[RMDB]
The data come from the RNA Mapping Database (RMDB), library M2RFPK. The record gives the reactivity of an RNA of 207 nucleotides to 2A3. For 2A3, 903 sequencing reads were counted. Conditions: 150 mM KOAc, 10 mM MgCl2 and 150 mM bicine (pH 8.5), 24 C.

RNA sequence: GGGAACGACUCGAGUAGAGUCGAAAAGAUUCGCCGUCGGCAUCUCCCCAGCAGCCAUGACCUACCAGGCUGCGGUGCGGCUCGCCGCACAGGUCAUCCCUCAUCGGGCGCGUCCUGCGUCCUUCCAAAAACUGACUAACCUUCGGGUUAGUCAGAACUUGGUUUAUUUCUUCGGAAAUAAACCAAGAAAAGAAACAACAACAACAAC
Reactivity to 2A3 in 0.01 (KOAc 150mM, MgCl2 10mM, bicine 150mM(pH8.5), 24C), signal-to-noise 2, nucleotides 027 to 156: g000a070u090u120c050g020c040c040g140u100c110g030g020c030a050u030c050u030c070c000c000c020a030g000c000a000g000c010c010a170u120g010a000c000c010u060a270c110c100a000g010g000c020u000g000c010g000g010u030g000c000g010g010c060u050c120g160c020c000g010c020a000c020a010g000g040u020c010a070u030c040c010c040u140c050a190u130c070g020g010g000c000g010c020g050u190c030c090u130g010c000g000u020c020c000u000u070c010c000a050a050a010a030a040c010u010g000a000c000u000a010a000c000c000u030u060c150g060g010g010u000u000a010g010u000c000a010g000a000a000